[RMDB]
RNA sequence: GGGAACGACUCGAGUAGAGUCGAAAAUCCGGUGAUCAAGGACGUAAGCCGGAGGAGCAAAGGUGAUUAGAGACCCCUGUAGUUCCGGCCGUAAACUAUGCCAACUGGGUGUUACGUAGUGGUACCCCUGGUAUGUAUCCUUCGGGAUACAUACCAGAAAAGAAACAACAACAACAAC
Reactivity to 2A3 in 0.01 (KOAc 150mM, MgCl2 10mM, bicine 150mM(pH8.5), 24C), signal-to-noise 2, nucleotides 027 to 126: u060c040c000g040g000u040g020a060u180c050a050a070g060g040a030c060g020u060a080a030g020c000c000g000g000a020g030g030a070g000c040a110a060a070g030g020u100g050a100u130u150a100g030a040g050a210c030c060c000c000u000g100u200a040g060u040u000c000c000g000g070c040c000g080u130a070a020a000c040u060a030u140g000c000c000a060a020c110u070g040g040g000u040g020u050u000a020c040g040u030a060g050u070g120g000u060a060c020c000c060
Reactivity to DMS in 0.01 (KOAc 150mM, MgCl2 10mM, bicine 150mM(pH8.5), 24C), signal-to-noise 2, nucleotides 027 to 126: u000c020c010g000g020u000g000a130u000c030a040a170g000g000a130c070g020u010a180a200g000c000c000g020g000a070g010g000a210g010c020a020a070a070g030g010u010g000a120u000u010a120g000a180g010a100c100c010c030c020u010g000u000a070g010u020u000c030c060g020g030c030c030g000u010a170a070a090c090u020a050u000g000c110c010a040a080c100u000g020g000g000u000g010u000u000a030c070g020u010a100g010u010g010g000u000a170c040c010c000